Conditions: 150 mM KOAc, 10 mM MgCl2 and 150 mM bicine (pH 8.5), 24 C. An RNA of 170 nucleotides, treated with 2A3 and DMS and read out base by base. For DMS the reverse transcriptase was MarathonRT.
[RMDB]
RNA sequence: GGGAACGACUCGAGUAGAGUCGAAAAGGAUGUAAAUCCUGAUGAUAAGUGCUUUGCUAAUAAGCACCGGUCCUUCACACAAUGGUAUCAUGAGCAUGUUGGUGGUGUCUAUGACAACUCUAUCACAAAGGUCGAUCCUUCGGGAUCGACAAAAGAAACAACAACAACAAC
Reactivity to 2A3 in 0.01 (KOAc 150mM, MgCl2 10mM, bicine 150mM(pH8.5), 24C), signal-to-noise 2, nucleotides 027 to 129: g000g000a020u020g000u300a020a070a230u000c000c000u020g020a070u150g000a060u030a180a110g020u060g000c020u010u000u130g000c000u120a060a010u130a170a000g030c000a000c000c000g020g040u050c010c080u110u130c020a070c020a000c030a090a040u000g040g000u120a020u010c000a000u110g010a000g100c040a020u090g010u070u020g100g000u000g000g000u000g050u000c050u010a100u070g010a000c000a000a000c010u000c000u040a020u020c030a030c010a120a000a010g050
Reactivity to DMS in 0.01 (KOAc 150mM, MgCl2 10mM, bicine 150mM(pH8.5), 24C), signal-to-noise 3, nucleotides 027 to 129: g030g000a020u030g000u070a020a030a030u000c020c020u020g000a120u040g010a080u020a140a110g050u090g000c080u000u000u050g020c140u000a110a100u020a000a000g010c030a040c020c000g050g000u000c000c080u000u050c070a100c160a060c150a040a030u010g030g060u000a070u000c150a070u040g020a110g000c060a050u040g030u000u000g050g040u010g010g010u030g030u030c080u060a120u050g050a150c140a050a140c050u020c000u040a050u050c060a040c070a020a040a090g030